[RMDB]
RNA sequence: GGGAACGACUCGAGUAGAGUCGAAAAGAAAGAUAGCGGCCGUUGAGAUGAGAUUACCCCAUACCAUAUAGCGGCAGCUCGACUCCGCACACGCGUAGGGGGCAAUCUCACCUCAACAGCUUCUCAACCGAAAACUAACCUUCGGGUUAGUUUUCGGAAAAGAAACAACAACAACAAC
Reactivity to 2A3 in 0.01 (KOAc 150mM, MgCl2 10mM, bicine 150mM(pH8.5), 24C), signal-to-noise 2, nucleotides 027 to 126: g030a030a070a000g090a030u160a070g010c050g010g020c010c030g000u000u000g000a000g010a020u000g000a000g000a000u010u060a070c000c000c000c000a020u000a010c000c020a090u110a010u080a270g000c010g040g000c040a000g000c040u090c120g160a270c030u000c000c000g000c000a020c020a040c220g100c080g020u000a000g000g000g000g010g000c010a000a010u020c000u000c000a000c000c000u000c000a000a000c000a010g000c000u020u000c010u000c000a020a060